[RMDB]
RNA sequence: GGGAACGACUCGAGUAGAGUCGAAAAGGUAACAGUGUGCCAGCCGUACUCAUCUCAGGACCGUUGCAGGCCACAUAGAAUCAUAGCCUUAGACGUAUGUACUCAGGGAAGAUUGGCGAUCUAAUGCUGAUUCAUUUAGAUUCGUCUAAAUGAAUCAAAAAGAAACAACAACAACAAC
Reactivity to DMS in 0.01 (KOAc 150mM, MgCl2 10mM, bicine 150mM(pH8.5), 24C), signal-to-noise 9, nucleotides 027 to 126: g010g010u010a070a110c120a090g010u000g010u010g010c020c030a090g020c040c040g010u000a100c080u000c080a090u010c080u010c110a070g010g010a100c150c040g010u000u000g020c090a080g010g010c020c030a050c100a070u010a080g010a100a070u010c090a070u010a100g000c010c030u000u010a090g000a040c050g010u000a050u010g010u000a050c050u000c060a100g010g000g010a080a060g010a090u000u000g010g010c030g000a110u000c040u000a050a060u010g010c110
Reactivity to 2A3 in 0.01 (KOAc 150mM, MgCl2 10mM, bicine 150mM(pH8.5), 24C), signal-to-noise 9, nucleotides 027 to 126: g070g000u070a100a040c040a100g070u050g020u080g150c010c010a020g020c020c020g020u040a050c030u020c080a160u040c060u030c080a040g020g050a070c030c040g040u050u090g020c030a020g000g030c030c010a020c010a030u170a030g150a070a060u120c050a100u100a050g020c000c000u030u010a030g010a020c020g070u100a060u210g050u050a080c030u020c070a040g060g040g040a050a030g030a120u050u100g030g000c010g020a040u010c020u080a070a030u100g040c040

Notes:
An RNA of 177 nucleotides, treated with DMS and 2A3 and read out base by base. High 2A3 reactivity points to a flexible backbone, as in loops and unpaired stretches. The RNA was probed in 150 mM KOAc, 10 mM MgCl2 and 150 mM bicine (pH 8.5) at 24 C. For 2A3 the reverse transcriptase was SuperScript II with manganese.